[RMDB]
This 177-nucleotide RNA was probed chemically with 2A3 and DMS. For DMS, 2,071 sequencing reads were counted. The 2A3 profile rests on 1,774 reads. High DMS reactivity at an A or C suggests that its Watson-Crick edge is free.

RNA sequence: GGGAACGACUCGAGUAGAGUCGAAAACUGAGACAAGAUACCGGGCCCUACGGGGCGCAGCAGGCGCGAAACCUUUACACUGCACGCCAGUGCGAUAAGGGGACUCCAUCUGCGAGGGCAUAUCGUCGGUUGAAUGCGUAUUCGUACGCAUUCAACCAAAAGAAACAACAACAACAAC
Reactivity to 2A3 in 0.01 (KOAc 150mM, MgCl2 10mM, bicine 150mM(pH8.5), 24C), signal-to-noise 3, nucleotides 027 to 126: c020u060g070a030g010a110c110a120a050g020a040u030a110c010c000g000g100g000c020c000c010u050a110c140g010g000g020g000c030g010c010a020g010c010a000g020g000c020g030c060g070a010a010a010c000c000u000u000u080a000c070a000c000u020g010c060a030c170g050c070c030a030g000u000g000c090g100a030u050a060a020g010g010g000g050a040c030u010c030c000a070u000c030u010g020c000g010a100g020g030g000c010a030u060a010u070c080g060u000c030
Reactivity to DMS in 0.01 (KOAc 150mM, MgCl2 10mM, bicine 150mM(pH8.5), 24C), signal-to-noise 2, nucleotides 027 to 126: c040u000g000a160g000a050c050a070a040g080a030u000a150c070c000g000g000g020c000c050c010u000a120c190g010g040g000g000c000g060c050a190g020c070a000g000g000c220g000c230g000a010a170a270c020c010u020u000u000a050c030a010c060u000g010c000a090c130g020c140c100a050g000u010g000c060g060a050u000a000a010g000g000g000g010a210c050u000c000c000a160u010c000u050g000c000g030a170g030g000g000c060a060u030a100u010c000g000u020c050